Conditions: 150 mM KOAc, 10 mM MgCl2 and 150 mM bicine (pH 8.5), 24 C.
The record gives the reactivity of an RNA of 177 nucleotides to 2A3.
[RMDB]
RNA sequence: GGGAACGACUCGAGUAGAGUCGAAAAGGCCUUGGAUCGGGUCAGCGCGUUCCAGCUGGGCUUCAUCAACGGCACGCCGGCGUGCGCGGCGAUCGACGAGGACGAAGUCGAGCGGCGCCGCGGUGACCUAGGAGGGCGAUUUCGAUCGCCCUCCUAGAAAAGAAACAACAACAACAAC
Reactivity to 2A3 in 0.01 (KOAc 150mM, MgCl2 10mM, bicine 150mM(pH8.5), 24C), signal-to-noise 2, nucleotides 027 to 126: g140g070c010c000u000u080g070g040a090u120c070g000g010g140u000c040a020g090c000g000c070g040u050u070c040c000a040g000c020u120g030g070g000c000u010u060c040a030u030c000a020a020c010g000g000c010a040c000g010c010c010g170g100c030g060u160g080c140g000c000g090g000c020g080a200u060c020g040a010c020g000a040g100g000a100c180g030a010a000g010u000c000g030a000g000c010g000g010c010g030c140c080g000c020g000g170u050g020a030c010
For 2A3, 639 sequencing reads were counted.